The data come from the RNA Mapping Database (RMDB), library OK1LIB. Chemical mapping of a 177-nucleotide RNA with DMS and 2A3. Values are in units of 0.01, from 0 to 300, in steps of 10.
[RMDB]
RNA sequence: GGGAACGACUCGAGUAGAGUCGAAAAAUGUCCAUAGGCAGCUUCAGGGGGUUCCAUUCUUAGUUAAUCCAACACUACGAAUGAGAGGGAUGUCCGCGUUUGGUUCAGCUAGAAUUACUAUAAUGACAAUUGUUCUCUUUUUCGAAAGAGAACAAUUAAAAGAAACAACAACAACAAC
Reactivity to DMS in 0.01 (KOAc 150mM, MgCl2 10mM, bicine 150mM(pH8.5), 24C), signal-to-noise 7, nucleotides 027 to 126: a080u020g000u000c020c040a100u020a060g020g020c030a060g000c050u000u010c060a080g000g000g000g000g000u020u000c040c010a020u000u000c020u020u000a020g010u000u010a080a060u040c100c110a040a090c120a030c010u010a030c050g000a020a010u010g000a120g010a090g010g010g010a090u010g000u010c040c040g000c080g000u010u010u010g000g010u010u010c030a070g010c060u010a080g000a090a070u020u010a080c100u020a080u030a070a070u020g000a100c150
Reactivity to 2A3 in 0.01 (KOAc 150mM, MgCl2 10mM, bicine 150mM(pH8.5), 24C), signal-to-noise 7, nucleotides 027 to 126: a000u120g020u030c020c000a020u050a030g040g040c050a010g000c020u090u090c090a030g000g000g020g010g010u090u020c010c000a010u010u010c010u030u030a030g000u020u070a120a150u120c080c030a060a030c020a010c070u040a020c030g020a050a040u070g010a070g020a020g230g010g010a030u080g040u030c010c010g040c040g030u020u090u050g060g000u060u040c010a020g020c040u060a040g040a120a130u210u060a080c070u080a080u140a270a140u160g040a020c050
For DMS, 21,393 sequencing reads were counted. The 2A3 profile rests on 6,982 reads.